[RMDB]
RNA sequence: GGGAACGACUCGAGUAGAGUCGAAAACAGCCUACACCUUGCAAACAAUAUCUGAUGAGGUUUCAUUUGAAACAUCCACUAGUCCAGAAUUGGUAGCGUGUGUGUUGGCUUAUGCAAUUGGUUAUGAGCUUUGCUUAACUGUUAAGACUGAUGGUGACCUCGCUGUUGGGUUCGCCCAACAGCGAGGAAAAGAAACAACAACAACAAC
Reactivity to 2A3 in 0.01 (KOAc 150mM, MgCl2 10mM, bicine 150mM(pH8.5), 24C), signal-to-noise 1, nucleotides 027 to 156: c000a000g000c000c000u000a000c000a000c000c030u100u270g000c030a300a300a130c020a000a080u090a300u050c010u000g010a090u040g020a050g050g060u000u000u050c150a240u140u230u300g000a030a000a000c030a000u170c070c080a140c270u140a000g040u000c040c000a010g000a030a000u000u030g100g040u020a060g000c000g000u000g000u000g000u000g050u040u000g000g000c030u010u000a100u000g010c060a130a080u130u000g000g000u030u140a090u210g050a050g040c040u000u060u090g000c000u090u300a080a080c040u140g000u280u080a110a040g020a050c080u110g120a100u200g010g000u250g020a060
The record gives the reactivity of an RNA of 207 nucleotides to 2A3. The data come from the RNA Mapping Database (RMDB), library OK3TST. The RNA was probed in 150 mM KOAc, 10 mM MgCl2 and 150 mM bicine (pH 8.5) at 24 C. Reactivities are given for positions 27 through 156. For 2A3 the reverse transcriptase was SuperScript II with manganese.